Source: RMDB library OK3TST, as collected in RNAgym. An RNA of 207 nucleotides, treated with DMS and read out base by base.
[RMDB]
RNA sequence: GGGAACGACUCGAGUAGAGUCGAAAAUAUGGAUGUUGAUGUUAUGGAUAUUGCCAAAGAAGCCCAUGAGCAAACAGGUUAUAAGGUCACGCGUAUCCCAGUUAUUGCUUACGGGAUUUGUCCGGAUUGCCAAGCAAAAGACCAACCUGAUUUUUAAUAUAGGCUAUAUCUUCGGAUAUAGCCUAUAAAAAGAAACAACAACAACAAC
Reactivity to DMS in 0.01 (KOAc 150mM, MgCl2 10mM, bicine 150mM(pH8.5), 24C), signal-to-noise 2, nucleotides 027 to 156: u010a040u000g000g020a090u010g010u000u000g000a080u000g000u010u000a110u000g040g010a110u000a060u000u000g020c020c060a070a120a170g010a080a180g020c020c010c010a170u000g020a110g010c030a100a100a170c050a060g010g020u000u010a100u000a090a090g000g010u000c040a030c030g020c090g010u000a120u010c010c010c040a260g020u000u000a040u000u000g020c020u000u000a080c080g030g000g030a100u010u000u020g000u010c020c000g030g010a160u010u000g020c040c090a060a100g000c030a030a040a100a100g010a040c040c060a030a110c020c010u000g000a060u000u000u000u000u000a050a250
DMS adducts were read by reverse transcription with MarathonRT.